[RMDB]
RNA sequence: GGGAACGACUCGAGUAGAGUCGAAAAAAUGCCGCCUCAGUUCCAAGCUCUUUCGUGGCACUGUAAACAGUCCUAUUGUGUUAGGGGCAGUCAACCACGUUGCGAAGCUAAAUUAUCUGGUCGAGAGUUACGAUUCCCUACUUCGGUAGGGAAUCAAUCAAAUCCUUAGAUUCGUCUAAGGAUUUGAAAAAGAAACAACAACAACAAC
Reactivity to 2A3 in 0.01 (KOAc 150mM, MgCl2 10mM, bicine 150mM(pH8.5), 24C), signal-to-noise 5, nucleotides 027 to 156: a000a020u090g020c030c010g030c010c010u040c020a050g030u080u070c020c010a050a020g000c020u010c010u030u060u050c020g010u030g020g020c090a020c030u030g060u110a100a150a100c050a100g090u080c000c010u090a100u140u240g160u040g070u140u080a040g000g000g020g000c010a010g020u020c020a020a060c000c000a020c020g000u020u040g050c090g070a070a020g000c010u070a050a140a070u160u150a090u090c120u010g030g000u050c080g040a020g000a000g160u080u100a070c080g000a000u000u020c000c000c000u000a000c000u010u020c180g100g000u000a000g000g000g000a000a000u000c000a000a000
Reactivity to DMS in 0.01 (KOAc 150mM, MgCl2 10mM, bicine 150mM(pH8.5), 24C), signal-to-noise 3, nucleotides 027 to 156: a060a040u000g000c030c030g000c010c020u000c040a100g010u010u010c030c030a160a300g010c020u000c020u000u000u000c010g030u000g010g000c040a040c010u000g010u000a030a120a060c040a140g000u000c010c000u000a080u010u000g040u000g040u000u000a050g030g010g010g030c000a020g000u000c020a050a030c000c020a040c040g010u000u000g020c100g000a100a100g020c040u010a050a030a060u000u000a070u000c050u000g010g030u010c020g000a110g010a150g010u000u000a100c090g000a030u000u000c010c000c000u000a020c000u000u010c300g050g020u000a000g000g000g000a000a000u010c010a020a190